[RMDB]
RNA sequence: GGGAACGACUCGAGUAGAGUCGAAAAGAUAUGGAAGCUCGAAGAACUAUGUAACAAGUGGUCGGAAACGACCACCGCCCAUAGGGAGAGCCUUCCUAAGUCAAAUCCGAAUGUUCGCAUUCGGAAAGUAUACAAAGACGUUCGCGUCUUUGUAUACAAAAGAAACAACAACAACAAC
Reactivity to 2A3 in 0.01 (KOAc 150mM, MgCl2 10mM, bicine 150mM(pH8.5), 24C), signal-to-noise 2, nucleotides 027 to 126: g020a030u080a020u170g000g000a010a000g000c000u030c030g250a300a080g000a090a010c010u010a010u070g050u220a130a080c060a180a110g010u010g000g000u000c000g000g040a140a060a020c010g010a000c000c000a010c000c010g010c000c040c000a010u010a010g040g000g000a040g000a010g030c000c000u010u000c000c000u010a130a010g040u050c050a090a040a180u000c010c010g020a020a000u000g030u060u110c300g000c230a010u000u000c000g020g000a040a000a000
Reactivity to DMS in 0.01 (KOAc 150mM, MgCl2 10mM, bicine 150mM(pH8.5), 24C), signal-to-noise 4, nucleotides 027 to 126: g010a010u000a300u000g000g000a040a030g030c000u000c010g010a120a170g020a160a220c000u000a000u000g010u000a060a090c150a160a080g010u000g000g000u000c000g010g000a040a080a160c010g010a000c000c000a010c010c020g010c300c190c000a010u000a000g010g000g000a080g000a030g000c150c060u000u000c000c000u000a050a110g000u000c040a060a060a130u000c000c000g000a030a010u000g010u010u010c160g020c010a020u000u000c010g000g000a010a010a060
Chemical mapping of a 177-nucleotide RNA with 2A3 and DMS. DMS adducts were read by reverse transcription with MarathonRT. High DMS reactivity at an A or C suggests that its Watson-Crick edge is free. Values cover nucleotides 27 to 126. The 2A3 profile rests on 4,003 reads. The DMS profile rests on 2,695 reads.